[RMDB]
RNA sequence: GGGAACGACUCGAGUAGAGUCGAAAAGAUAUGGAAUCGUUAAGCAGGCAACAGCCCAUUGGUCGGAAACGACCAUGGGACAUGCCUGUACGAUUCCUAAGUCAAACGGUGAAGUUCGCUUCACCGAGCUUAGCCACUCGUUCGCGAGUGGCUAAGCAAAAGAAACAACAACAACAAC
Reactivity to 2A3 in 0.01 (KOAc 150mM, MgCl2 10mM, bicine 150mM(pH8.5), 24C), signal-to-noise 1, nucleotides 027 to 126: g000a010u020a000u060g000g000a030a020u020c010g000u080u270a300a070g040c000a000g050g000c100a300a110c130a180g010c000c060c000a020u190u300g000g000u000c000g030g040a030a030a000c000g030a000c000c000a010u020g000g000g000a000c020a090u300g000c000c000u010g000u000a000c010g010a000u000u060c010c010u010a000a000g020u010c030a090a010a060c050g050g000u000g000a000a010g000u070u180c260g040c120u010u000c030a000c000c020g010a010
An RNA of 177 nucleotides, treated with 2A3 and read out base by base.
Values cover nucleotides 27 to 126.
It was measured as part of the RMDB library TTRDES.